[RMDB]
RNA sequence: GGGAACGACUCGAGUAGAGUCGAAAACCCCACCCACCCCAUCACGGUGGCAGCUCCACUCCGGGCCCCGAGGCCGGGCCGUGGGGUCAGGCCGUGGGUGAGCAGGGACUCGGGGUGGCUCUUGGGGCACGAAAUCAUUGUUCGCAAUGAUUUCGUGAAAAGAAACAACAACAACAAC
Reactivity to 2A3 in 0.01 (KOAc 150mM, MgCl2 10mM, bicine 150mM(pH8.5), 24C), signal-to-noise 1, nucleotides 027 to 126: c020c000c000c000a020c000c000c000a030c000c020c010c000a080u120c050a020c100g040g010u030g010g000c000a030g020c030u000c020c020a000c020u000c000c010g070g010g000c000c020c020c060g060a220g030g000c010c030g010g050g000c020c030g050u120g040g260g000g000u020c020a020g030g000c020c040g010u090g000g070g070u190g030a040g000c070a090g030g080g070a120c000u020c060g000g000g010g000u000g000g020c020u030c000u030u070g020g000g020g000
Reactivity to DMS in 0.01 (KOAc 150mM, MgCl2 10mM, bicine 150mM(pH8.5), 24C), signal-to-noise 2, nucleotides 027 to 126: c050c000c010c040a070c150c010c020a090c000c000c030c070a130u000c160a070c160g010g030u000g000g040c200a100g000c090u000c000c000a020c000u010c000c010g030g020g010c020c000c050c080g000a120g030g000c010c020g000g010g000c020c030g020u020g010g010g020g030u010c010a240g000g000c010c010g020u000g010g010g000u000g010a100g020c030a220g020g000g000a070c020u000c020g000g000g010g010u000g000g010c050u000c020u000u010g010g000g000g010
Overview
The record gives the reactivity of an RNA of 177 nucleotides to 2A3 and DMS. For 2A3, 2,682 sequencing reads were counted. Conditions: 150 mM KOAc, 10 mM MgCl2 and 150 mM bicine (pH 8.5), 24 C.